This 177-nucleotide RNA was probed chemically with 2A3 and DMS. 2A3 adducts were read by reverse transcription with SuperScript II with manganese. The reactions ran in a buffer of 150 mM KOAc, 10 mM MgCl2 and 150 mM bicine (pH 8.5), at 24 C.
RNA sequence: GGGAACGACUCGAGUAGAGUCGAAAAGCUGGUGAAUUCAGGAAAGCUGAUAAAUGGUAAGAGAUAUUUUGGAAGAGCCCUGGAAUUGCCUGAAGUAAAAGAAUGGCUCAAGCAGUCUCAAAGGCAGGUAAAGGUAUGGUUUCGACCAUACCUUUACAAAAGAAACAACAACAACAAC
Reactivity to 2A3 in 0.01 (KOAc 150mM, MgCl2 10mM, bicine 150mM(pH8.5), 24C), signal-to-noise 2, nucleotides 027 to 126: g030c010u010g030g070u010g020a100a130u050u050c020a030g030g000a100a060a020g010c010u030g000a060u110a070a110a020u050g010g060u100a100a000g080a010g050a120u030a120u090u120u070u010g120g000a090a010g040a060g080c050c000c020u030g010g060a110a070u060u020g000c000c000u030g030a130a010g020u110a000a130a020a000g040a050a030u040g010g020c010u010c050a040a000g030c000a010g040u050c000u010c050a060a040a040g030g020c040a000g100
Reactivity to DMS in 0.01 (KOAc 150mM, MgCl2 10mM, bicine 150mM(pH8.5), 24C), signal-to-noise 3, nucleotides 027 to 126: g010c040u010g010g030u000g020a070a100u000u010c050a010g000g020a130a090a130g010c010u010g030a160u000a050a040a070u010g020g000u010a050a120g020a130g010a090u010a050u000u000u000u000g010g010a120a110g000a080g020c060c000c030u000g010g000a050a090u000u000g000c020c000u020g000a100a060g010u000a050a070a090a100g000a070a090u010g010g010c050u000c040a060a060g010c100a060g020u000c020u000c050a050a100a070g000g010c070a070g010